[RMDB]
Structure probing data (DMS and 2A3) for a 177-nucleotide construct. It was measured as part of the RMDB library OK1LIB. The 2A3 profile rests on 652 reads.
RNA sequence: GGGAACGACUCGAGUAGAGUCGAAAAGAAAGUGAGUGAGAAAAGCAAUACAUAUAGAGCUGGAGGCUUAUUCACCCAUUUAUGGACAUAUCAACAUGAUGGGAAUCCGGGUGAUUGUGGAGGACCGACCACCCCUUAGGUUCGCCUAAGGGGUGGUAAAAGAAACAACAACAACAAC
Reactivity to DMS in 0.01 (KOAc 150mM, MgCl2 10mM, bicine 150mM(pH8.5), 24C), signal-to-noise 2, nucleotides 027 to 126: g010a070a070a070g030u010g020a050g000u000g000a090g000a100a080a080a070g010c010a060a110u000a070c140a130u010a280u050a090g000a170g000c010u000g000g000a170g000g000c030u000u020a020u000u000c120a090c000c010c000a000u000u000u090a110u000g020g020a070c080a120u040a110u020c140a140a060c060a010u030g000a000u000g000g030g010a090a100u030c020c040g000g000g030u000g000a010u000u000g090u010g020g000a050g000g000a100c110c030g000
Reactivity to 2A3 in 0.01 (KOAc 150mM, MgCl2 10mM, bicine 150mM(pH8.5), 24C), signal-to-noise 2, nucleotides 027 to 126: g120a000a030a070g070u140g000a000g020u130g070a140g150a020a090a000a060g020c080a080a090u210a280c080a130u280a050u120a140g060a000g010c010u000g000g000a060g080g000c050u060u000a000u230u000c020a080c000c000c000a000u020u070u280a030u010g010g020a040c070a070u110a040u140c000a020a070c030a020u030g000a000u020g000g060g120a050a060u000c030c070g120g000g000u040g070a220u150u180g010u030g020g100a090g030g000a000c040c050g010